The record gives the reactivity of an RNA of 177 nucleotides to DMS and 2A3. The RNA was probed in 150 mM KOAc, 10 mM MgCl2 and 150 mM bicine (pH 8.5) at 24 C. DMS adducts were read by reverse transcription with MarathonRT.

RNA sequence: GGGAACGACUCGAGUAGAGUCGAAAAGAGUGCUGCAGGUGUUGGAGAGCAGUGUGUGUUGCCUGGGGACUGUGUGGACUGGUAUCACCCAGACAGCUUGCACUGACUCCAGACCCUGCCGUCAUAAAUCCUUGCACGUUUUCGAACGUGCAAGGAUAAAAGAAACAACAACAACAAC
Reactivity to DMS in 0.01 (KOAc 150mM, MgCl2 10mM, bicine 150mM(pH8.5), 24C), signal-to-noise 1, nucleotides 027 to 126: g020a040g020u010g020c020u000g020c010a000g010g000u000g010u030u000g000g000a120g010a150g030c010a020g020u010g000u010g020u010g030u010u000g020c040c030u000g020g000g000g000a080c030u000g000u010g040u020g000g000a090c080u010g000g000u010a080u040c110a160c000c010c010a010g000a020c000a000g020c000u000u000g010c000a000c010u000g010a090c010u000c010c020a040g000a040c040c040c010u000g000c010c060g030u030c050a130u010a100a120
Reactivity to 2A3 in 0.01 (KOAc 150mM, MgCl2 10mM, bicine 150mM(pH8.5), 24C), signal-to-noise 3, nucleotides 027 to 126: g090a020g000u170g010c000u020g010c000a000g000g010u100g000u100u020g000g000a030g010a090g110c010a000g000u000g000u000g010u010g000u000u000g000c000c000u010g000g010g000g000a010c010u050g040u030g060u160g220g120a110c070u030g040g000u090a070u170c050a170c070c000c000a000g000a010c010a000g020c000u040u150g000c010a000c000u000g030a030c000u000c000c000a010g020a030c000c000c000u000g010c000c000g020u020c000a000u110a110a160